[RMDB]
RNA sequence: GGGAACGACUCGAGUAGAGUCGAAAAACUCUGGUUUGAUUUUGUUGAAAAUCCCAGUGUUAUUGGUGUUUAUCAUAAACUUGGAGAACGUGUACGCCAAGCUAUCUUAAACACUGUUAAAUUUUGUCCAGUAUAAUGUUCGCAUUAUACAAAAGAAACAACAACAACAAC
Reactivity to DMS in 0.01 (KOAc 150mM, MgCl2 10mM, bicine 150mM(pH8.5), 24C), signal-to-noise 9, nucleotides 027 to 129: a080c030u030c010u060g010g030u030u030u020g000a090u010u010u020u060g020u050u060g010a060a020a030a030u010c020c000c020a040g030u000g000u010u000a050u050u060g010g030u000g010u010u040u010a020u020c150a000u000a040a110a200c000u000u000g010g010a110g000a130a190c220g000u070g050u090a140c100g000c030c020a010a000g020c090u020a030u030c120u060u020a030a030a020c030a010c000u020g000u030u030a040a120a150u040u040u040u050g010u040c020c020a160
Reactivity to 2A3 in 0.01 (KOAc 150mM, MgCl2 10mM, bicine 150mM(pH8.5), 24C), signal-to-noise 9, nucleotides 027 to 129: a000c010u000c000u010g010g060u130u160u050g040a030u020u010u030u100g280u100u300g130a040a030a000a010u000c000c010c000a010g000u010g020u040u080a180u090u220g010g000u000g010u020u000u010a020u020c020a020u040a030a080a050c010u010u000g020g000a120g060a200a060c100g070u140g080u280a020c060g020c010c000a000a000g000c000u000a020u020c020u010u010a010a000a000c010a000c010u010g090u100u160a120a170a180u100u170u100u120g080u020c020c000a000

Structure probing data (DMS and 2A3) for a 170-nucleotide construct. For DMS, 43,857 sequencing reads were counted. It was measured as part of the RMDB library 15KLIB. Conditions: 150 mM KOAc, 10 mM MgCl2 and 150 mM bicine (pH 8.5), 24 C. For DMS the reverse transcriptase was MarathonRT.